Source: RMDB library 15KLIB, as collected in RNAgym. Chemical mapping of a 170-nucleotide RNA with 2A3 and DMS. High 2A3 reactivity points to a flexible backbone, as in loops and unpaired stretches.
RNA sequence: GGGAACGACUCGAGUAGAGUCGAAAAAAAGGACCUGAAAUCCGAUAUCUCUAUUUUGUUAAAAAUCUUAACAACCUUCAUCGCGGGCAAGUGUUAGGGCACAUUGCUGCGACUGUUAGAUUGCAAGUAACAGAAUGCUUCGGCAUUCUGAAAAGAAACAACAACAACAAC
Reactivity to 2A3 in 0.01 (KOAc 150mM, MgCl2 10mM, bicine 150mM(pH8.5), 24C), signal-to-noise 6, nucleotides 027 to 129: a000a020a020g030g000a010c040c060u120g060a050a040a020u010c010c000g010a020u030a130u120c020u000c000u010a130u070u140u020u060g070u050u050a040a160a020a020a050u030c010u050u060a030a020c020a020a050c000c020u120u120c050a030u030c020g000c020g030g000g020c000a020a050g010u010g020u140u180a120g070g090g000c010a030c070a190u010u010g010c020u000g010c000g000a020c020u020g010u040u010a010g000a040u000u050g010c040a030a040g060u040a060a030
Reactivity to DMS in 0.01 (KOAc 150mM, MgCl2 10mM, bicine 150mM(pH8.5), 24C), signal-to-noise 6, nucleotides 027 to 129: a050a120a140g070g020a080c080c060u000g050a110a140a280u030c020c000g020a110u050a070u030c040u050c010u000a100u050u030u030u020g020u020u020a010a030a020a020a000u020c020u000u000a090a070c030a020a050c120c000u000u000c070a130u020c040g010c030g000g000g000c040a040a020g030u020g000u010u060a130g000g000g000c020a000c030a070u000u000g030c060u040g030c050g040a000c110u010g010u050u020a010g030a060u010u020g060c060a030a050g010u000a120a180

Source information
The RNA was probed in 150 mM KOAc, 10 mM MgCl2 and 150 mM bicine (pH 8.5) at 24 C. The DMS profile rests on 18,119 reads.